Notes
Structure probing data (2A3 and DMS) for a 207-nucleotide construct. Values cover nucleotides 27 to 156.
RNA sequence: GGGAACGACUCGAGUAGAGUCGAAAAUUUGCGUGGCCACCUCCCCUAAAGAGUCCAGCUCGGCUCAGCACCCGGGAGGGUGAGUGCCUGCACUCUCGUCAAACUGCUUACGGCUCGAAUCUGAGUUCUGCCACUUAGCUAGCAGCGUGACCGCGGAACUCACUGAUAGUUUCGACUAUCAGUGAGUAAAAGAAACAACAACAACAAC
Reactivity to 2A3 in 0.01 (KOAc 150mM, MgCl2 10mM, bicine 150mM(pH8.5), 24C), signal-to-noise 3, nucleotides 027 to 156: u100u050u120g040c020g060u050g000g010c010c000a020c020c010u040c000c010c000c020u070a110a140a030g000a010g020u090c040c030a130g040c140u080c090g000g010c010u000c010a050g020c060a130c020c030c010g020g020g000a030g060g020g000u090g020a020g000u160g000c020c020u000g000c000a030c030u060c040u010c000g000u050c080a090a070a090c050u030g010c030u130u160a050c060g010g050c010u020c060g080a080a150u070c150u270g030a040g130u090u000c030u010g010c000c000a110c080u110u130a040g040c050u030a020g000c020a020g000c030g080u000g020a020c020c080g030c050g100g010a040
Reactivity to DMS in 0.01 (KOAc 150mM, MgCl2 10mM, bicine 150mM(pH8.5), 24C), signal-to-noise 1, nucleotides 027 to 156: u000u000u000g010c000g030u000g000g030c000c010a050c020c020u020c000c000c000c030u000a060a150a170g020a060g000u000c010c070a170g000c070u000c110g000g020c030u010c010a120g040c060a180c250c060c070g020g020g010a060g000g000g060u000g000a040g040u010g030c050c030u010g020c070a050c080u000c000u000c030g030u020c060a150a040a060c010u020g000c000u000u000a140c090g000g000c000u000c030g000a050a050u020c090u010g010a060g000u000u000c020u000g000c030c050a100c080u020u000a130g040c050u000a010g030c030a010g030c100g010u000g010a040c010c060g050c090g000g000a120
The RNA was probed in 150 mM KOAc, 10 mM MgCl2 and 150 mM bicine (pH 8.5) at 24 C.